[RMDB]
RNA sequence: GGGAACGACUCGAGUAGAGUCGAAAACAGGAGGCGAAAAGCAGUGUCCUGCUGGCGAACAUGGUGUGGGACGAGGGCCAGGGCGCACCGGGCCAGCUUAUCGCUGCCGCGCUGGCCGACUUGCGCCCUACGUGUACCAAUUCGUUGGUACACGUAGAAAAGAAACAACAACAACAAC
Reactivity to DMS in 0.01 (KOAc 150mM, MgCl2 10mM, bicine 150mM(pH8.5), 24C), signal-to-noise 9, nucleotides 027 to 126: c080a080g010g010a100g010g010c050g000a060a060a100a090g010c040a060g010u010g000u000c060c030u000g010c030u000g010g000c040g010a060a090c120a090u010g010g010u000g020u010g000g010g000a080c090g000a090g000g010g010c080c100a070g000g000g010c010g010c010a050c140c080g010g000g010c010c000a010g000c020u000u000a080u010c130g010c040u000g000c050c050g010c300g000c010u000g000g010c000c000g000a070c110u000u000g010c010g010c010c010
Reactivity to 2A3 in 0.01 (KOAc 150mM, MgCl2 10mM, bicine 150mM(pH8.5), 24C), signal-to-noise 8, nucleotides 027 to 126: c040a020g040g040a030g010g040c050g060a070a070a050a040g060c040a020g040u020g080u170c020c020u020g030c020u010g030g020c040g040a080a040c070a120u140g030g030u090g030u090g070g010g020a040c060g030a100g020g030g000c030c040a010g010g010g000c010g000c000a020c030c040g020g030g010c010c010a000g000c010u060u100a130u140c060g020c110u060g040c030c020g020c020g000c010u000g000g000c000c000g010a020c020u040u090g000c000g010c000c010